[RMDB]
RNA sequence: GGGAACGACUCGAGUAGAGUCGAAAACCUGUUAUCUAACCAAUAACAGAAUGCACCACAGCGUAAAAUCAUCUGAUUGGGUGAGUUGGUCGCACCGCCAUUUGACGAACGAACGCCAAGCCUAAGCACUACGAGUAUGUGUUCGCACAUACUCGAAACAUGAUUAGAUCUUCGGAUCUAAUCAUGUAAAAGAAACAACAACAACAAC
Reactivity to 2A3 in 0.01 (KOAc 150mM, MgCl2 10mM, bicine 150mM(pH8.5), 24C), signal-to-noise 9, nucleotides 027 to 156: c000c010u000g010u000u010a020u010c020u010a000a030c010c010a010a010u020a020a000c010a010g070a080a080u130g030c030a030c040c010a030c050a030g020c020g060u090a030a080a060a080u060c020a030u000c040u090g080a210u110u170g060g010g000u030g030a070g020u030u090g040g020u060c040g000c030a030c020c020g030c030c020a060u060u060u140g060a050c040g020a150a010c030g020a040a010c030g020c030c020a040a030g010c000c020u100a100a030g050c060a050c120u160a060c060g000a000g000u000a000u000g020u000g010u020u070c140g040c060a000c000a000u000a000c000u000c000g000a000a000
Reactivity to DMS in 0.01 (KOAc 150mM, MgCl2 10mM, bicine 150mM(pH8.5), 24C), signal-to-noise 4, nucleotides 027 to 156: c060c020u000g000u010u000a030u000c010u000a120a140c170c130a220a010u000a010a040c020a030g000a120a110u000g020c060a110c020c020a060c030a100g000c050g020u000a070a050a080a110u000c030a070u000c050u000g010a110u000u000g020g020g010u000g010a140g010u000u000g030g030u000c050g020c030a070c030c010g010c040c020a170u000u000u000g030a050c040g000a090a080c090g000a070a050c040g020c000c000a050a180g000c010c020u000a040a100g030c060a140c060u000a140c000g010a010g010u000a000u000g040u010g020u000u010c300g010c020a010c020a020u000a010c000u000c000g010a020a040

Source information
Structure probing data (2A3 and DMS) for a 207-nucleotide construct. The 2A3 profile rests on 19,274 reads. Values cover nucleotides 27 to 156. It was measured as part of the RMDB library M2RFPK. The reactions ran in a buffer of 150 mM KOAc, 10 mM MgCl2 and 150 mM bicine (pH 8.5), at 24 C.